Conditions: 150 mM KOAc, 10 mM MgCl2 and 150 mM bicine (pH 8.5), 24 C.
This 207-nucleotide RNA was probed chemically with 2A3.
It was measured as part of the RMDB library M2RFPK.

[RMDB]
RNA sequence: GGGAACGACUCGAGUAGAGUCGAAAAACGAGUCGUACGCGACUCGAAUGGUAUUGUCGGCGUAAAAGAACAAGACGUCACCGGACGCGACCGGGCUAAAAAGCAAAACGUCAUCUACGGAUGACGAAAAACGGACCUGGGUUCGCCCAGGUCCGAACAUAACAGACUGCUUCGGCAGUCUGUUAUGAAAAGAAACAACAACAACAAC
Reactivity to 2A3 in 0.01 (KOAc 150mM, MgCl2 10mM, bicine 150mM(pH8.5), 24C), signal-to-noise 1, nucleotides 027 to 156: a000c000g000a000g000u000c010g000u000a080c210g020c000g080a020c000u000c000g050a000a030u150g050g040u150a110u060u160g060u060c060g020g000c000g030u020a030a110a090a030g080a060a020c070a060a010g060a040c030g000u040c030a030c050c000g050g010a050c040g000c010g040a020c020c000g020g020g020c010u070a050a000a050a050a000g010c020a000a010a010a040c000g000u000c000a000u010c000u010a030c110g090g010a000u000g010a000c000g020a000a030a000a000a130c020g000g010a000c010c000u010g000g000g000u040u090c150g100c040c000c000a010g000g000u000c000c000g000a010a010